[RMDB]
RNA sequence: GGGAACGACUCGAGUAGAGUCGAAAAGUCUAUCACAACCCGGACGACCUUAUCAGCCUGGACAGCGAGGGGAUCGGGGAGCAUAUGACCAAACUCAGGGCCGAAGUGUGCCGCAUCCCGCGCAUUUACAACACGAACGGGAAGUUUGCCAGGAUGCACAGAAAGAAAGGUUCGCCUUUCUUUCUGUAAAAGAAACAACAACAACAAC
Reactivity to 2A3 in 0.01 (KOAc 150mM, MgCl2 10mM, bicine 150mM(pH8.5), 24C), signal-to-noise 2, nucleotides 027 to 156: g010u000c030u050a100u090c090a010c040a090a180c000c010c050g010g040a070c050g010a020c000c000u110u050a190u190c080a070g040c030c020u020g030g100a040c020a010g010c010g000a050g030g050g000g020a060u040c040g000g030g000g030a020g030c020a010u000a110u250g030a040c040c000a040a020a020c040u070c100a060g000g010g090c040c000g070a080a080g050u060g000u080g140c030c060g000c000a000u010c000c010c000g050c030g000c030a030u050u160u190a110c050a060a030c040a000c190g080a190a010c020g000g030g030a040a050g020u040u050u030g040c000c000a030g010g000a020u030g040c020
Reactivity to DMS in 0.01 (KOAc 150mM, MgCl2 10mM, bicine 150mM(pH8.5), 24C), signal-to-noise 1, nucleotides 027 to 156: g020u000c040u000a140u000c050a140c020a080a130c000c050c020g120g000a090c030g020a030c020c050u000u000a150u000c030a070g000c040c010u010g040g010a110c090a130g000c020g000a120g010g000g040g040a030u000c050g020g010g020g010a140g020c040a060u060a060u000g000a100c000c010a050a100a120c060u000c040a110g000g010g020c010c000g000a000a220g000u010g010u000g000c050c070g030c020a010u000c010c000c030g010c090g030c000a100u000u000u010a110c080a080a060c080a110c050g030a060a110c050g000g000g010a060a150g010u000u000u000g040c010c010a070g010g010a090u000g000c090